[RMDB]
Structure probing data (2A3) for a 207-nucleotide construct. High 2A3 reactivity points to a flexible backbone, as in loops and unpaired stretches.
RNA sequence: GGGAACGACUCGAGUAGAGUCGAAAAAUAGAAGUCUCAAAAACAGCAAGCUACGACUAAAGCCUUGUCUAGAGCCUUAGUAAGAGAUUUAUAGACUCGCUAAGUAAUGGCUUGAGUUAUGUGUCCUUACUUAGUCAAAACAAGACAUAACCUAUGGCUAGGACACGGAGUUCGCUCCGUGUCCUAGAAAAGAAACAACAACAACAAC
Reactivity to 2A3 in 0.01 (KOAc 150mM, MgCl2 10mM, bicine 150mM(pH8.5), 24C), signal-to-noise 1, nucleotides 027 to 156: a010u110a030g100a060a000g060u000c030u040c030a110a120a080a060a070c060a030g090c060a180a000g000c030u040a030c060g050a040c030u040a030a020a020g000c010c080u070u110g020u040c020u050a020g030a000g070c010c030u020u010a000g060u030a090a000g030a000g000a000u060u260u210a160u120a030g030a010c000u000c030g000c000u000a000a000g010u000a020a000u050g010g000c040u030u030g010a030g050u040u030a010u040g010u000g020u000c000c000u000u000a010c000u000u000a010g010u040c000a000a030a000a060c110a090a000g060a070c000a020u010a000a000c000c010u060a110u130g200g000
For 2A3, 518 sequencing reads were counted.